This 177-nucleotide RNA was probed chemically with 2A3 and DMS. The reactions ran in a buffer of 150 mM KOAc, 10 mM MgCl2 and 150 mM bicine (pH 8.5), at 24 C. DMS adducts were read by reverse transcription with MarathonRT. For 2A3, 28,788 sequencing reads were counted.
RNA sequence: GGGAACGACUCGAGUAGAGUCGAAAAAAGUGAUUAUUCGUAAUCACUUCACGCCGGGCGCGGUGGCGCGUGCCUCUAGUCCCAGCUACUCGGGAGGCUAAACGACGUACCCGUUCGCGGGUACGAAGCAUAACAGAAUGUUCGCAUUCUGUUAUGCAAAAGAAACAACAACAACAAC
Reactivity to 2A3 in 0.01 (KOAc 150mM, MgCl2 10mM, bicine 150mM(pH8.5), 24C), signal-to-noise 6, nucleotides 027 to 126: a000a000g000u010g000a010u010u030a020u040u110c210g040u080a010a000u000c000a000c000u040u040c090a080c070g010c000c000g010g010g000c010g000c000g000g010u000g000g000c010g000c000g000u010g000c010c000u000c030u060a050g010u000c000c000c000a010g000c040u260a250c020u070c120g010g000g000a000g010g000c010u060a110a090a010c080g120a020c010g000u000a000c000c020c000g010u030u050c260g000c000g060g010g000u000a000c000g000a000a000
Reactivity to DMS in 0.01 (KOAc 150mM, MgCl2 10mM, bicine 150mM(pH8.5), 24C), signal-to-noise 7, nucleotides 027 to 126: a030a000g020u000g000a010u000u000a020u000u010c190g020u000a010a010u000c000a000c000u000u000c090a090c190g010c010c010g010g010g000c000g000c020g000g010u000g010g000c010g000c010g010u000g000c000c000u000c050u010a120g010u000c000c000c000a020g020c010u000a150c040u000c070g010g010g010a030g000g010c000u000a020a040a070c150g010a200c020g000u000a000c000c000c000g010u000u010c190g010c010g010g010g010u000a000c000g000a040a090